[RMDB]
RNA sequence: GGGAACGACUCGAGUAGAGUCGAAAACUGGCGGUAUCGGCAAGGGUAAGUGGAUUGACGUAACUGAUGCGACUUUGCGAGGACAACUGGCUGGGACUGGUGGUGCCUCUAUGGUAAAAGCCUCAGAGGGAUUUAGUAGAUUCGUCUACUAAAUCCCAAAAGAAACAACAACAACAAC
Reactivity to 2A3 in 0.01 (KOAc 150mM, MgCl2 10mM, bicine 150mM(pH8.5), 24C), signal-to-noise 6, nucleotides 027 to 126: c010u010g050g000c030g020g040u050a060u090c030g050g010c030a030a030g080g000g010u080a100a070g030u050g050g070a150u080u070g030a020c050g040u080a110a030c040u040g030a070u080g050c000g050a070c030u080u090u120g020c030g020a050g000g040a030c020a070a010c080u040g040g020c030u070g030g030g090a090c030u050g030g000u040g030g020u070g020c010c000u020c020u050a090u070g000g000u060a070a060a050a060g030c010c010u030c040a050g020a100
Reactivity to DMS in 0.01 (KOAc 150mM, MgCl2 10mM, bicine 150mM(pH8.5), 24C), signal-to-noise 5, nucleotides 027 to 126: c030u000g010g030c080g000g020u010a060u010c090g000g020c040a050a080g000g000g000u000a030a110g010u000g000g000a090u010u020g000a070c080g010u030a050a120c050u000g010a060u020g010c040g010a060c080u000u010u020g000c040g010a060g000g010a060c070a060a070c120u000g000g010c020u010g020g000g010a090c050u000g010g010u000g000g020u010g010c030c010u000c100u000a060u020g010g000u010a050a060a100a080g000c060c010u030c050a050g020a300
Background
The record gives the reactivity of an RNA of 177 nucleotides to 2A3 and DMS. Conditions: 150 mM KOAc, 10 mM MgCl2 and 150 mM bicine (pH 8.5), 24 C. For DMS the reverse transcriptase was MarathonRT. For 2A3, 6,075 sequencing reads were counted.